[RMDB]
RNA sequence: GGGAACGACUCGAGUAGAGUCGAAAACUGCACCAUUCUUUAAUCAAUGAGUGACUGGAGGGGAAAAGGAAAGCGAGAAAGAAACAUCGAAUAACGUCCUCAUACUAAGUUUGCUUGUAUUUUGUAGACCUGUUUUACUGUUCGCAGUAAAACAGGUAAAAGAAACAACAACAACAAC
Reactivity to DMS in 0.01 (KOAc 150mM, MgCl2 10mM, bicine 150mM(pH8.5), 24C), signal-to-noise 2, nucleotides 027 to 126: c050u000g000c020a080c190c050a090u000u010c050u000u020u020a080a060u020c150a040a050u030g010a060g050u020g010a050c060u000g010g030a100g000g000g000g000a040a030a120a060g000g000a050a170a050g000c020g000a090g000a090a030a110g000a070a060a160c170a110u000c020g010a030a050u040a060a150c050g000u000c010c010u000c020a030u010a130c050u010a060a130g020u000u000u020g030c100u000u010g010u010a050u000u000u010u010g000u010a210g020
Annotation: This 177-nucleotide RNA was probed chemically with DMS. It was measured as part of the RMDB library RFMREP. Reactivities are rounded to 0.1 and cut off at 0 and 3. The DMS profile rests on 969 reads. Values cover nucleotides 27 to 126.